[RMDB]
RNA sequence: GGGAACGACUCGAGUAGAGUCGAAAAGAUAUGGAAUGUUCUCUCCCAGCGAUGAAAUCGGAAACGAUGGAGCUGGAGGAGAGACAUUCCUAAGUCAAAGCUCCUGCAACUUCGGUUGCAGGAGCAACCAAAUAUAACAGUUCGCUGUUAUAUUUGGAAAAGAAACAACAACAACAAC
Reactivity to 2A3 in 0.01 (KOAc 150mM, MgCl2 10mM, bicine 150mM(pH8.5), 24C), signal-to-noise 5, nucleotides 027 to 126: g000a020u070a050u170g000g050a020a000u030g180u300u070c010u000c000u000c000c010c000a010g000c010g230a300u050g030a050a030a010u010c010g000g040a080a050a040c020g000a010u010g020g030a010g010c010u040g060g080a060g130g010a010g010a000g010a000c000a000u000u000c000c000u000a080a010g030u000c050a150a060a050g000c000u000c000c010u000g000c010a000a010c010u100u140c300g180g000u020u010g010c000a000g000g000a000g000c000a010a000
Reactivity to DMS in 0.01 (KOAc 150mM, MgCl2 10mM, bicine 150mM(pH8.5), 24C), signal-to-noise 4, nucleotides 027 to 126: g000a030u010a300u010g010g000a020a000u000g010u010u000c000u000c000u010c000c000c010a020g000c000g010a110u010g000a070a120a010u000c000g000g000a150a130a210c010g000a020u000g000g010a070g020c000u000g000g010a060g010g010a010g000a010g000a010c000a000u000u000c000c000u000a010a080g000u000c020a070a130a170g000c010u000c000c000u000g000c000a020a020c000u010u010c210g020g010u000u000g010c000a020g000g000a000g010c010a000a020
Chemical mapping of a 177-nucleotide RNA with 2A3 and DMS. The 2A3 profile rests on 13,498 reads. The DMS profile rests on 7,380 reads. Values are in units of 0.01, from 0 to 300, in steps of 10. The RNA was probed in 150 mM KOAc, 10 mM MgCl2 and 150 mM bicine (pH 8.5) at 24 C. For DMS the reverse transcriptase was MarathonRT.